RNA sequence: GGGAACGACUCGAGUAGAGUCGAAAAGAUAUGGACUUAUUGAGAUUAGCGUCGGAAACGACGCGAUCAAUGAUGUAAGGUCCUAAGUCAAAAGUGGAUAUGGACUCUUCGGAGUCCAUAUCCACAAUCACACAUUAGGGUUCGCCCUAAUGUGUGAAAAAGAAACAACAACAACAAC
Reactivity to DMS in 0.01 (KOAc 150mM, MgCl2 10mM, bicine 150mM(pH8.5), 24C), signal-to-noise 3, nucleotides 027 to 126: g010a040u000a300u010g000g000a170c000u000u020a010u010u000g010a180g020a050u000u020a080g030c000g010u000c000g000g010a050a050a200c000g000a010c000g010c010g000a010u000c000a120a140u030g000a070u010g010u010a010a030g000g000u000c000c010u010a070a150g010u000c010a070a070a130a190g010u000g010g010a010u000a000u000g000g000a010c000u000c000u000u000c210g030g000a010g010u000c000c000a000u010a000u000c000c000a000c000a000a030